[RMDB]
RNA sequence: GGGAACGACUCGAGUAGAGUCGAAAACUUUGUCAACACGCUGAUAAUACCCAAUCCCACCGGAAAAGUGAAUAUUGAUCACAUGCACCGGCCCUUCACUGAGGCGGAAAUUCUGCACGUGUUCCGAAUCCCAUCGAGUGUUCGCACUCGAUGGGAUAAAAGAAACAACAACAACAAC
Reactivity to 2A3 in 0.01 (KOAc 150mM, MgCl2 10mM, bicine 150mM(pH8.5), 24C), signal-to-noise 1, nucleotides 027 to 126: c040u070u030u050g030u040c000a020a000c020a000c070g040c040u010g000a030u030a130a040u090a050c000c010c010a000a020u040c020c000c000a050c030c000g060g040a000a020a000a130g150u070g050a160a000u110a050u100u120g040a020u010c000a000c020a020u040g000c020a020c030c000g290g020c030c000c060u050u030c050a160c300u080g020a080g120g010c020g010g060a040a040a040u200u100c090u120g010c050a010c100g020u020g000u010u020c000c010g020a030
Reactivity to DMS in 0.01 (KOAc 150mM, MgCl2 10mM, bicine 150mM(pH8.5), 24C), signal-to-noise 1, nucleotides 027 to 126: c100u000u000u010g000u000c060a070a070c070a000c070g000c050u000g000a110u000a060a080u000a170c120c000c010a190a140u000c010c020c050a110c050c030g000g010a090a070a090a100g000u010g010a000a040u020a140u000u030g000a070u000c070a000c060a130u000g030c060a100c020c000g000g010c030c000c010u000u000c080a080c080u010g010a070g000g000c000g010g020a030a050a100u000u000c300u000g050c010a050c080g010u000g030u000u020c010c040g000a190